[RMDB]
RNA sequence: GGGAACGACUCGAGUAGAGUCGAAAAGAUCCAAAGAUGGAUUGCUCGUGUCUAUCUACGGGUCUUACCAUUUAACGAGCUACGUUUAACUACUUACCUUAAUAGUUAGAAAUAAGAUUCUUAGGUUAGUUUUGAUAGUUUAGCCCUGUUAUAUGGCGGUAUAUUCUAUCUUCGGAUAGAAUAUACCAAAAGAAACAACAACAACAAC
Reactivity to DMS in 0.01 (KOAc 150mM, MgCl2 10mM, bicine 150mM(pH8.5), 24C), signal-to-noise 3, nucleotides 027 to 156: g010a030u000c010c000a070a300a060g010a090u000g020g000a060u000u000g030c100u000c120g010u000g030u020c020u020a030u000c010u000a140c300g000g030g030u020c020u010u000a060c010c010a080u000u020u000a020a030c000g010a030g000c000u000a020c050g020u000u000u010a030a040c030u000a040c010u000u000a070c050c030u000u000a060a090u000a090g020u010u000a050g010a070a070a070u000a130a150g000a260u000u000c080u000u000a020g020g010u000u000a040g010u000u000u000u010g010a050u010a060g020u000u010u000a050g020c020c010c000u010g030u000u000a040u010a050u010g010g020c160
Reactivity to 2A3 in 0.01 (KOAc 150mM, MgCl2 10mM, bicine 150mM(pH8.5), 24C), signal-to-noise 8, nucleotides 027 to 156: g000a000u000c000c010a080a090a020g010a010u020g010g000a010u040u140g050c070u080c090g130u140g010u000c000u000a010u000c000u020a040c070g000g000g000u000c000u000u030a010c000c000a030u100u120u030a010a000c010g010a000g000c010u050a010c040g040u030u050u090a060a030c020u040a010c000u040u060a010c000c010u110u110a100a060u070a230g070u120u050a060g080a050a120a060u160a100a060g050a160u130u030c010u050u070a010g010g000u040u030a010g020u020u040u070u080g060a060u060a090g040u050u080u070a000g000c000c010c030u030g020u040u010a080u010a030u090g040g000c040